An RNA of 177 nucleotides, treated with 2A3 and read out base by base.
Conditions: 150 mM KOAc, 10 mM MgCl2 and 150 mM bicine (pH 8.5), 24 C.
For 2A3 the reverse transcriptase was SuperScript II with manganese.
The data come from the RNA Mapping Database (RMDB), library OK1LIB.
Reactivities are given for positions 27 through 126.
[RMDB]
RNA sequence: GGGAACGACUCGAGUAGAGUCGAAAAACAUUUGCGGAAUGGAGAACGGCGAACCGACCGAGAUAUCAAUCACCGAAUUUGCCACCAGUACGAUUUCCACCGCACCGGUGACAAAGGUCAACAGACAGCGAUCCAUGGAUUUCGAUCCAUGGAUCGCAAAAGAAACAACAACAACAAC
Reactivity to 2A3 in 0.01 (KOAc 150mM, MgCl2 10mM, bicine 150mM(pH8.5), 24C), signal-to-noise 2, nucleotides 027 to 126: a000c060a130u090u110u070g100c030g010g070a170a160u120g070g000a050g000a000a000c060g040g100c000g010a020a000c000c080g030a000c000c020g090a100g030a090u120a010u140c090a110a010u060c000a010c010c000g160a240a230u000u000u100g000c010c000a020c030c000a060g080u110a080c010g000a020u000u000u040c130c040a090c030c000g040c000a000c000c000g000g000u000g000a000c030a100a110a110g010g010u020c000a020a050c030a080g050a020c030a020